Notes: Chemical mapping of a 207-nucleotide RNA with 2A3 and DMS. The 2A3 profile rests on 737 reads. It was measured as part of the RMDB library OK3TST. Values cover nucleotides 27 to 156. For DMS, 2,839 sequencing reads were counted.
RNA sequence: GGGAACGACUCGAGUAGAGUCGAAAAUAUCUCUAGCAGGGGAAGGCUAGCCUAAUCAGGGAUAUGUCCAGUUCAGAAAUGUGGACCGUUUUGUGGCACCGCUUCUCCAUGGUCCUGAGGCUCCCCGAGGAGGCAUCUGCACAGGAAGGGGAGCUUACCUGACUAAAAUGUUCGCAUUUUAGUCAGGAAAAGAAACAACAACAACAAC
Reactivity to 2A3 in 0.01 (KOAc 150mM, MgCl2 10mM, bicine 150mM(pH8.5), 24C), signal-to-noise 1, nucleotides 027 to 156: u030a020u010c000u010c000u000a000g030c050a020g000g000g000g000a000a050g000g030c010u030a000g050c000c000u080a090a050u110c040a020g040g000g030a050u050a040u070g050u000c000c010a030g020u100u090c040a080g090a120a100a080u230g070u070g040g010a030c010c010g010u030u100u090u120g140u050g000g040c050a060c120c060g010c020u020u000c020u000c010c010a050u030g050g010u010c030c070u080g000a030g000g010c000u000c000c040c010c000g040a050g060g020a040g030g000c000a020u050c150u280g080c050a090c060a130g090g050a040a030g000g000g000g000a000g000c000u000u000a000
Reactivity to DMS in 0.01 (KOAc 150mM, MgCl2 10mM, bicine 150mM(pH8.5), 24C), signal-to-noise 2, nucleotides 027 to 156: u000a000u000c000u000c020u010a100g040c060a190g010g020g010g030a090a090g010g030c040u000a190g000c030c040u010a110a120u030c090a090g030g010g000a060u000a030u000g020u000c020c020a180g010u000u010c090a160g030a030a080a160u000g020u000g040g010a060c010c070g020u000u020u000u020g050u000g010g000c050a100c060c050g020c060u000u000c020u000c020c000a110u000g030g000u000c090c010u000g000a060g040g010c000u000c000c000c000c020g020a200g010g010a160g020g000c040a170u000c050u000g000c000a200c080a110g010g000a100a160g030g000g010g010a040g030c010u000u000a030